An RNA of 177 nucleotides, treated with 2A3 and DMS and read out base by base.
The 2A3 profile rests on 1,543 reads.
The data come from the RNA Mapping Database (RMDB), library OK2TST.
Reactivities are rounded to 0.1 and cut off at 0 and 3.
For 2A3 the reverse transcriptase was SuperScript II with manganese.
For DMS, 1,931 sequencing reads were counted.
The reactions ran in a buffer of 150 mM KOAc, 10 mM MgCl2 and 150 mM bicine (pH 8.5), at 24 C.

RNA sequence: GGGAACGACUCGAGUAGAGUCGAAAAGGCAUAGUCAUGAUUGCACCUGUCAACGCUACGAUAAAUCCUGCACCUGUUUUCGCUUCUAAUUCACGAAUUGUAAUUUCAAAUCCUGAUGGUGCACCUAUGGUUACGCAGAAUUCGUUCUGCGUAACCAAAAAGAAACAACAACAACAAC
Reactivity to 2A3 in 0.01 (KOAc 150mM, MgCl2 10mM, bicine 150mM(pH8.5), 24C), signal-to-noise 2, nucleotides 027 to 126: g040g010c030a050u050a020g010u050c010a030u100g060a110u000u160g000c020a010c020c020u010g010u060c010a030a070c070g020c060u050a020c020g070a030u070a110a090a000u030c020c000u030g030c000a020c000c030u010g110u050u040u060u100c070g010c010u010u030c000u080a060a080u110u080c050a030c110g020a030a020u040u060g050u070a040a200u060u160u080c060a090a060a080u050c020c030u060g000a080u080g000g000u010g000c020a050c000c000u120a160
Reactivity to DMS in 0.01 (KOAc 150mM, MgCl2 10mM, bicine 150mM(pH8.5), 24C), signal-to-noise 3, nucleotides 027 to 126: g010g020c070a080u010a070g020u000c050a070u020g020a080u000u000g020c020a050c060c030u000g000u020c030a030a100c110g010c020u020a070c100g000a070u000a060a070a140u000c010c030u010g000c050a070c060c010u000g000u000u000u000u000c050g000c080u000u000c040u010a040a100u010u000c080a040c080g010a060a070u020u000g010u020a050a090u010u000u020c110a030a060a130u000c030c040u000g000a030u000g020g020u000g020c080a070c180c090u000a150